[RMDB]
RNA sequence: GGGAACGACUCGAGUAGAGUCGAAAACUAGAUACAUGUUUUGAAGCUACAGAAGCAACAUUUAACUUCUUGUUAGAUUUGGCAGGAUUGUUCAGAAUCUUUCUCCGCAAUGCCUAUGUGUACACUUACCCGCCGUACUUCGGUACGGCGAAAAGAAACAACAACAACAAC
Reactivity to DMS in 0.01 (KOAc 150mM, MgCl2 10mM, bicine 150mM(pH8.5), 24C), signal-to-noise 2, nucleotides 027 to 129: c080u000a090g010a210u040a030c190a100u000g020u000u010u150u020g040a120a110g010c000u050a030c000a000g030a020a080g020c000a040a060c190a110u040u070u010a030a020c010u000u050c060u060u030g010u060u040a010g010a070u000u010u010g040g000c010a000g010g010a070u030u030g030u030u020c000a110g040a110a110u060c120u000u040u030c000u000c040c090g030c060a000a000u040g030c040c060u010a060u000g040u000g010u000a070c000a000c050u000u000a130c090c000
Reactivity to 2A3 in 0.01 (KOAc 150mM, MgCl2 10mM, bicine 150mM(pH8.5), 24C), signal-to-noise 4, nucleotides 027 to 129: c010u020a050g050a110u100a050c050a030u110g140u030u080u040u090g070a090a000g020c040u000a020c020a050g070a090a010g010c010a000a100c020a080u090u140u130a030a060c000u000u010c030u120u140g030u060u070a020g000a070u030u000u100g050g020c000a020g010g090a030u000u060g000u060u110c060a020g040a040a020u000c010u020u120u010c010u010c040c000g040c050a020a060u100g030c000c000u050a070u070g030u000g030u000a010c080a010c080u010u020a050c000c000
The record gives the reactivity of an RNA of 170 nucleotides to DMS and 2A3. It was measured as part of the RMDB library 15KLIB. The RNA was probed in 150 mM KOAc, 10 mM MgCl2 and 150 mM bicine (pH 8.5) at 24 C.